[RMDB]
RNA sequence: GGGAACGACUCGAGUAGAGUCGAAAAGCAUCCAGGUAGGCACGCAGGGUCUGAGCCAGCACCGGAUCCUGGGCGCCCAGGUCACGUAUCCGAGGAUCGACGAGCCGCUGGUCGGUGCCGACCAGGGGCUGUCAUUUACCUUCGGGUAAAUGACAGCAAAAGAAACAACAACAACAAC
Reactivity to 2A3 in 0.01 (KOAc 150mM, MgCl2 10mM, bicine 150mM(pH8.5), 24C), signal-to-noise 9, nucleotides 027 to 126: g040c020a060u040c010c010a020g040g070u100a040g080g000c030a000c060g130c040a070g030g010g030u030c030u040g030a040g070c040c040a040g040c060a040c040c000g020g000a000u010c000c000u010g030g070g010c040g020c000c010c010a020g020g050u070c050a020c140g050u070a080u050c030c020g040a090g030g020a050u060c040g080a080c040g030a040g050c030c060g050c110u010g010g010u020c020g020g130u160g160c120c010g000a010c000c010a010g020g000g040
Reactivity to DMS in 0.01 (KOAc 150mM, MgCl2 10mM, bicine 150mM(pH8.5), 24C), signal-to-noise 9, nucleotides 027 to 126: g010c120a100u010c010c010a130g010g020u000a060g010g010c010a030c040g010c020a030g000g010g000u000c020u000g000a150g010c030c050a090g010c070a110c100c020g010g000a020u000c010c010u000g000g000g030c050g010c030c010c050a060g010g000u000c060a070c160g000u010a080u000c030c030g000a120g010g000a070u000c070g010a100c080g010a100g010c010c010g000c020u000g000g010u000c010g010g010u000g010c140c010g000a020c010c000a030g000g010g010
The record gives the reactivity of an RNA of 177 nucleotides to 2A3 and DMS.
For DMS, 49,974 sequencing reads were counted.
For 2A3, 31,987 sequencing reads were counted.